Conditions: 150 mM KOAc, 10 mM MgCl2 and 150 mM bicine (pH 8.5), 24 C. An RNA of 177 nucleotides, treated with DMS and 2A3 and read out base by base. For DMS, 1,611 sequencing reads were counted. 2A3 adducts were read by reverse transcription with SuperScript II with manganese.

RNA sequence: GGGAACGACUCGAGUAGAGUCGAAAAAGAAACCACGGAAACGAGCCUCCCUGGCAAGGUAAAUGGAACGGACCCUCCGAGCAAAGGCACCAAAAGCUGAGAUGAGCUCAGCAAGGGUAAAAAAAAACAGCUAAAAUAUGUUCGCAUAUUUUAGCUGAAAAGAAACAACAACAACAAC
Reactivity to DMS in 0.01 (KOAc 150mM, MgCl2 10mM, bicine 150mM(pH8.5), 24C), signal-to-noise 2, nucleotides 027 to 126: a090g010a130a100a110c030c010a020c080g010g020a030a050a070c090g010a120g000c060c050u000c020c030c020u010g010g030c020a060a050g010g020u030a040a050a120u000g000g000a050a060c020g000g010a060c030c030c010u000c000c020g010a100g000c100a090a090a100g010g000c050a050c060c050a040a070a110a170g000c000u000g000a010g010a300u000g040a180g010c020u000c000a010g000c000a050a070g000g000g000u030a010a000a000a000a000a090a090a100a110
Reactivity to 2A3 in 0.01 (KOAc 150mM, MgCl2 10mM, bicine 150mM(pH8.5), 24C), signal-to-noise 2, nucleotides 027 to 126: a000g080a080a040a020c020c010a000c000g020g050a130a100a010c030g000a050g010c010c000u000c000c010c000u030g020g020c030a040a030g000g000u070a080a090a090u150g030g010a060a010c030g070g030a050c020c000c000u000c000c020g020a020g020c040a060a060a020g040g000c030a030c000c010a060a160a030a020g000c030u000g000a010g000a080u150g070a030g170c000u010c010a000g010c000a010a030g030g010g000u100a140a050a000a000a000a000a030a030a000